[RMDB]
RNA sequence: GGGAACGACUCGAGUAGAGUCGAAAAUCCCGAUUUCAAAUUGCUACACAAUUUACAAGCAGACAUUUGCUACAAGUUCGUCCUUUGGGAUUAUGAACGUAGCAAUAUUUAUGGUACUGCUACUAUUUACUACAUUUUACUUCGGUAAAAUGUAGUAAAAAGAAACAACAACAACAAC
Reactivity to DMS in 0.01 (KOAc 150mM, MgCl2 10mM, bicine 150mM(pH8.5), 24C), signal-to-noise 4, nucleotides 027 to 126: u000c000c000c000g000a100u000u020u000c130a070a050a030u000u000g000c110u020a140c250a300c030a040a010u000u000u000a120c270a140a070g010c000a000g010a090c040a100u010u020u010g010c010u000a010c010a030a160g010u000u000c010g010u000c000c010u000u020u020g030g010g010a010u000u010a030u020g020a020a020c050g000u000a000g000c000a010a030u020a030u010u010u010a060u010g020g000u000a090c000u000g010c000u000a160c120u010a060u000u000
Reactivity to 2A3 in 0.01 (KOAc 150mM, MgCl2 10mM, bicine 150mM(pH8.5), 24C), signal-to-noise 5, nucleotides 027 to 126: u000c000c000c000g010a050u120u160u040c030a050a050a010u050u030g010c070u300a070c040a010c010a090a060u060u130u230a100c060a100a000g000c000a000g020a000c010a040u040u040u020g010c000u000a000c000a100a150g010u010u010c000g010u000c010c010u030u150u300g130g000g000a010u060u070a100u240g000a010a000c010g000u000a000g000c000a000a000u040a020u010u150u030a090u080g070g010u090a110c000u000g000c000u010a050c000u030a030u030u020
An RNA of 177 nucleotides, treated with DMS and 2A3 and read out base by base. For 2A3 the reverse transcriptase was SuperScript II with manganese. DMS adducts were read by reverse transcription with MarathonRT. It was measured as part of the RMDB library 15KREP. Reactivities are given for positions 27 through 126.